RNA sequence: GGGAACGACUCGAGUAGAGUCGAAAAAGAGCAGAGGAGUAAAGCUAUGGGGGCCAAGGGAAGCAAGACCUUGAGGGGCCAGUGGUUAACUGGUAGAAUCAGUUCAUUUUUUUUUUGAGAUGGAGUCUCUCUCUGUUGCCCAGGCUGGAGUGCAGUGUACAUGACAAAGAUUCGUCUUUGUCAUGUAAAAAGAAACAACAACAACAAC
Reactivity to DMS in 0.01 (KOAc 150mM, MgCl2 10mM, bicine 150mM(pH8.5), 24C), signal-to-noise 2, nucleotides 027 to 156: a090g030a080g040c020a080g030a120g000g010a130g030u000a070a090a100g000c090u000a090u000g020g010g020g040g030c090c030a040a100g030g010g000a070a090g030c060a110a110g000a070c070c030u000u020g010a140g000g010g020g010c000c020a030g020u000g020g010u000u010a080a060c010u000g010g020u000a060g010a080a120u010c060a060g010u010u000c060a000u020u000u000u000u000u000u000u010u000u000g010a070g010a040u010g000g000a110g030u000c020u010c010u000c020u020c010u000g000u000u000g020c000c030c030a090g000g010c010u000g050g010a080g020u000g030c030a080g020u010g020
Reactivity to 2A3 in 0.01 (KOAc 150mM, MgCl2 10mM, bicine 150mM(pH8.5), 24C), signal-to-noise 2, nucleotides 027 to 156: a010g080a030g000c030a030g010a020g050g000a010g040u100a080a110a020g010c050u040a090u150g020g000g000g050g000c020c010a040a030g000g010g020a000a050g030c070a020a040g050a040c020c000u080u110g020a020g010g020g040g000c010c000a000g000u020g040g080u100u050a050a040c000u010g050g000u040a020g060a030a020u070c040a020g010u060u000c050a090u030u010u030u010u020u030u000u060u070u080g050a070g000a010u050g080g010a020g030u000c020u000c010u000c000u010c000u050g020u050u040g040c000c000c000a000g050g000c040u000g000g010a040g020u080g030c020a010g020u040g030